[RMDB]
RNA sequence: GGGAACGACUCGAGUAGAGUCGAAAAUGAAUGAUGAUAUAUCACCGCCCCAGUCAUAAUUUUUGUGCUGAUUCGGAUUUACAGAACACGCCAGUUUUGCUUCUGAUGCCACCCCUUUCGAGGGGUGACAGCCAUUAGUGUUCGCACUAAUGGCUGUAAAAGAAACAACAACAACAAC
Reactivity to DMS in 0.01 (KOAc 150mM, MgCl2 10mM, bicine 150mM(pH8.5), 24C), signal-to-noise 2, nucleotides 027 to 126: u010g000a110a120u000g010a060u010g000a140u020a100u000a100u000c050a060c040c060g000c050c000c040c040a110g020u010c020a050u010a050a070u010u000u010u020u010g010u000g030c010u010g000a130u010u000c100g030g000a160u010u020u000a070c080a100g000a020a060c020a060c140g020c060c080a050g010u000u000u000u000g010c080u000u000c050u000g000a120u000g020c150c010a010c000c000c000c000u000u020u010c180g000a020g020g000g020g010u000g000

An RNA of 177 nucleotides, treated with DMS and read out base by base. The DMS profile rests on 1,278 reads. High DMS reactivity at an A or C suggests that its Watson-Crick edge is free.